[RMDB]
RNA sequence: GGGAACGACUCGAGUAGAGUCGAAAAUCUUCGCAUUCUUUUUUACCUUCCCCUGAACGGGAGGCGUUUCGUCGUGUGAAACAGAAUGCGAAGACGAACAAUAAGGCCUCCCAAAUCGGGGGGCCUUCGUUUAUUUACUUUUCGAAGUAAAUAAACGAAAAGAAACAACAACAACAAC
Reactivity to DMS in 0.01 (KOAc 150mM, MgCl2 10mM, bicine 150mM(pH8.5), 24C), signal-to-noise 3, nucleotides 027 to 126: u000c000u000u000c000g000c000a000u000u000c000u000u000u000u000u000u000a010c010c090u020u010c010c000c030c060u010g030a110a180c300g010g000g010a100g000g010c030g010u010u010u020c050g020u000c060g030u050g010u000g010a000a000a020c030a010g000a000a000u000g000c000g000a020a000g010a010c070g000a190a080c080a080a080u050a060a020g000g000c000c000u000c000c000c000a050a120a140u020c250g000g000g020g000g000g010c010c000u010u000
Reactivity to 2A3 in 0.01 (KOAc 150mM, MgCl2 10mM, bicine 150mM(pH8.5), 24C), signal-to-noise 9, nucleotides 027 to 126: u010c000u000u000c000g000c000a000u000u000c010u000u070u030u020u030u060a030c010c020u080u100c010c010c000c040u130g140a110a030c060g010g010g010a010g020g010c020g050u120u170u200c090g030u020c040g020u060g010u040g130a000a000a000c010a000g000a000a000u000g000c000g000a000a000g000a000c000g010a040a020c030a040a080u130a100a020g000g000c000c000u010c000c000c010a080a130a080u250c110g000g000g000g000g000g000c000c000u000u000
The record gives the reactivity of an RNA of 177 nucleotides to DMS and 2A3. The RNA was probed in 150 mM KOAc, 10 mM MgCl2 and 150 mM bicine (pH 8.5) at 24 C. 2A3 adducts were read by reverse transcription with SuperScript II with manganese. It was measured as part of the RMDB libraries RFM100 and RFMREP.